[RMDB]
RNA sequence: GGGAACGACUCGAGUAGAGUCGAAAAAUUAGUCCCGCACCGCGUGAGGCAGGAAACUGAGCAGCGAAAAGGGACAGCUGCGGACGGCGAAAGGAUCGCAUGCUUGAGGAGGUGCCACGACCACCCGGGGGGUCCUCUGUGGGACCAACUACCGUUUCAGAUAAUAUUAGUUCGCUAAUAUUAUCUGAAAAGAAACAACAACAACAAC
Reactivity to 2A3 in 0.01 (KOAc 150mM, MgCl2 10mM, bicine 150mM(pH8.5), 24C), signal-to-noise 1, nucleotides 027 to 156: a000u140u100a020g020u030c000c000c000g000c040a050c030c010g000c000g070u060g030a000g030g000c010a000g000g090a070a050a010c030u050g010a020g000c020a000g020c040g040a080a020a000a000g030g020g000a000c020a010g010c000u030g030c000g030g030a060c000g020g060c090g070a160a080a040g060g010a050u020c030g010c040a040u140g010c020u080u110g040a050g010g020a020g030g010u020g010c040c020a030c010g070a030c050c030a000c000c010c020g000g000g000g000g000g000u010c040c000u070c020u090g050u240g050g030g000a000c000c020a030a020c020u120a080c020c010g010u010u000u010